[RMDB]
RNA sequence: GGGAACGACUCGAGUAGAGUCGAAAAGUCCGUGCUCGCAGCGUAGAGUCAUCAUCACGGAACCGCUGAGACGUGGCCGUCUGCCCACCCUUGGUUAAAUCUAGCAGACUGGUUUCUGGGUGCGCUUUGCCUGUCGUGCUGCCCGGCGACGAGACCUCUUUCCUUAUACCUUCGGGUAUAAGGAAAGAAAAGAAACAACAACAACAAC
Reactivity to 2A3 in 0.01 (KOAc 150mM, MgCl2 10mM, bicine 150mM(pH8.5), 24C), signal-to-noise 3, nucleotides 027 to 156: g000u010c000c000g010u040g000c000u040c090g090c030a110g000c080g150u160a020g030a040g110u050c020a070u080c000a030u070c010a020c050g030g010a030a020c030c020g020c030u030g080a030g000a060c060g020u040g010g000c000c010g020u020c020u060g000c020c000c000a000c000c000c010u020u080g060g020u070u160a050a100a140u090c120u150a040g000c000a000g060a040c020u060g050g000u020u010u040c020u040g010g000g000u020g010c060g000c000u060u040u070g010c000c000u070g040u170c050g010u030g000c030u020g000c040c010c010g020g030c030g030a020c030g000a010g040a060c020c010u000
Chemical mapping of a 207-nucleotide RNA with 2A3. The RNA was probed in 150 mM KOAc, 10 mM MgCl2 and 150 mM bicine (pH 8.5) at 24 C. For 2A3, 2,269 sequencing reads were counted.